[RMDB]
RNA sequence: GGGAACGACUCGAGUAGAGUCGAAAAGUCAGAGAUGUGUUGUGCGUGUGUGUGGCGUGAUCGCUCACCAAGUAUUUAGCGGGAUUCUACCCUGUUCGUUCCGCCCGCGCGUGAUCGCGAUUGUGUCGACAACAUUGAACUUCGGUUCAAUGUUGUCAAAAGAAACAACAACAACAAC
Reactivity to DMS in 0.01 (KOAc 150mM, MgCl2 10mM, bicine 150mM(pH8.5), 24C), signal-to-noise 2, nucleotides 027 to 126: g010u010c090a080g010a100g000a090u010g010u000g030u020u020g010u000g010c040g020u010g000u010g010u000g000u010g030g000c040g020u010g000a100u000c040g000c020u000c030a020c010c060a060a100g020u000a070u010u000u000a100g010c070g020g010g010a040u000u000c040u000a020c020c010c020u000g000u010u030c000g010u000u000c000c000g000c120c050c030g010c010g010c070g030u010g010a140u000c020g010c050g010a100u010u000g010u000g000u000c100
Reactivity to 2A3 in 0.01 (KOAc 150mM, MgCl2 10mM, bicine 150mM(pH8.5), 24C), signal-to-noise 3, nucleotides 027 to 126: g070u080c030a040g020a020g020a210u050g060u010g040u200u050g030u050g030c040g020u040g040u040g000u010g050u100g080g000c040g020u060g070a070u130c020g000c020u020c010a030c000c040a030a020g030u030a070u110u130u100a060g040c030g000g050g010a010u020u000c000u030a040c000c000c000u030g060u080u010c010g010u000u000c000c010g060c000c010c000g030c000g010c040g040u060g120a150u180c020g000c020g020a030u090u140g080u030g040u070c070
Source: RMDB library RFMREP, as collected in RNAgym. Chemical mapping of a 177-nucleotide RNA with DMS and 2A3. For DMS the reverse transcriptase was MarathonRT. The RNA was probed in 150 mM KOAc, 10 mM MgCl2 and 150 mM bicine (pH 8.5) at 24 C. For DMS, 2,048 sequencing reads were counted.